[RMDB]
RNA sequence: GGGAACGACUCGAGUAGAGUCGAAAACAUGCUUGAGAGAGAACUAGUUGCCCGAAGAAGGUUCCUGCCAGUAGCAGGAGCAACAUCAGCAGAGUUCAUAGAAAUGCUACAUUGCUUACAAGGUGAACAAACGACGUACGUUCGCGUACGUCGUUUGAAAAGAAACAACAACAACAAC
Reactivity to DMS in 0.01 (KOAc 150mM, MgCl2 10mM, bicine 150mM(pH8.5), 24C), signal-to-noise 2, nucleotides 027 to 126: c080a100u030g020c020u000u000g000a120g000a120g000a110g000a050a030c040u000a140g000u030u020g020c050c010c020g000a070a090g040a140a210g000g000u000u000c000c000u000g010c020c080a120g000u110a190g050c000a010g030g000a010g000c040a000a050c090a110u030c050a080g010c050a090g040a070g000u000u000c090a050u020a040g020a070a080a030u010g020c070u000a090c190a140u040u020g000c020u020u020a070c150a030a070g000g000u000g020a030a190
Reactivity to 2A3 in 0.01 (KOAc 150mM, MgCl2 10mM, bicine 150mM(pH8.5), 24C), signal-to-noise 3, nucleotides 027 to 126: c000a010u100g000c030u160u160g070a070g020a010g010a060g020a090a050c070u060a110g120u040u120g130c020c030c010g020a040a050g070a000a040g010g000u000u000c000c000u000g000c020c000a140g110u140a040g050c030a000g000g070a000g000c010a000a050c000a050u070c020a020g000c020a010g000a000g140u030u030c030a070u020a140g070a110a210a020u080g030c050u010a020c000a200u020u300g000c000u070u050a040c030a050a070g100g050u110g020a060a000
The record gives the reactivity of an RNA of 177 nucleotides to DMS and 2A3. For 2A3 the reverse transcriptase was SuperScript II with manganese. The DMS profile rests on 2,433 reads. Reactivities are given for positions 27 through 126.